The data come from the RNA Mapping Database (RMDB), library OK1LIB. An RNA of 177 nucleotides, treated with 2A3 and read out base by base. Values are in units of 0.01, from 0 to 300, in steps of 10. Values cover nucleotides 27 to 126.
[RMDB]
RNA sequence: GGGAACGACUCGAGUAGAGUCGAAAAAAACACGUCUCGCACUUUCCUUCUAAAUAUUCAAUAGUUGUAUGUUACAAAUAAAAACAAUUACACAUUAUAGAAAAGAAGAGAUAUAAUUACAUUAUACCUCCACAGUGAUUUUCGAAUCACUGUGGAGAAAAGAAACAACAACAACAAC
Reactivity to 2A3 in 0.01 (KOAc 150mM, MgCl2 10mM, bicine 150mM(pH8.5), 24C), signal-to-noise 1, nucleotides 027 to 126: a000a000a130c250a050c050g000u150c000u000c000g070c000a000c020u020u000u070c010c010u000u000c030u220a300a130a180u090a070u110u170c010a090a070u100a070g020u040u030g040u040a070u030g040u050u090a070c000a080a220a000u180a240a200a000a000a000c040a070a070u080u220a000c020a000c000a000u130u180a070u090a210g060a000a070a000a000g110a070a000g000a170g000a050u230a000u000a100a170u060u060a000c000a040u090u110a130u070a000c030